[RMDB]
RNA sequence: GGGAACGACUCGAGUAGAGUCGAAAAGAUAUGGAUCCGUCUAACACGCGCGAAGAACGCUAUCGGAAACGAUAGCGGGAGCGUGUUAGAGCGGAUCCUAAGUCAAAUCGGAUCUUCGGAUCCGAAAGUCUGCUUAUAACUUCGGUUAUAAGCAGACAAAAGAAACAACAACAACAAC
Reactivity to 2A3 in 0.01 (KOAc 150mM, MgCl2 10mM, bicine 150mM(pH8.5), 24C), signal-to-noise 3, nucleotides 027 to 126: g030a030u090a070u180g020g010a010u000c000c010g020u030c040u010a020a000c000a000c010g040c000g060c110g220a170a120g050a170a030c010g000c000u000a000u000c010g060g000a120a070a040c010g010a000u000a010g010c000g000g000g000a090g000c000g010u000g000u010u000a000g000a000g010c000g010g000a000u000c000c000u000a020a010g040u000c020a000a020a180u050c010g010g010a000u000c000u040u050c300g160g010a000u000c010c010g000a000a000a000
Reactivity to DMS in 0.01 (KOAc 150mM, MgCl2 10mM, bicine 150mM(pH8.5), 24C), signal-to-noise 3, nucleotides 027 to 126: g010a050u000a300u020g000g010a040u000c000c000g000u010c010u000a010a010c000a000c000g010c000g020c190g050a240a170g020a230a200c020g010c010u020a000u000c000g030g000a170a150a180c000g000a010u000a000g020c000g000g000g000a210g010c010g020u000g020u000u000a000g000a080g020c020g010g000a000u000c000c000u010a010a070g010u010c040a080a100a170u000c010g020g000a010u000c010u020u020c240g010g010a020u000c000c000g010a010a030a090
Source information:
An RNA of 177 nucleotides, treated with 2A3 and DMS and read out base by base. Source: RMDB library TTRDES, as collected in RNAgym. For 2A3 the reverse transcriptase was SuperScript II with manganese. For 2A3, 7,693 sequencing reads were counted. Conditions: 150 mM KOAc, 10 mM MgCl2 and 150 mM bicine (pH 8.5), 24 C. DMS adducts were read by reverse transcription with MarathonRT.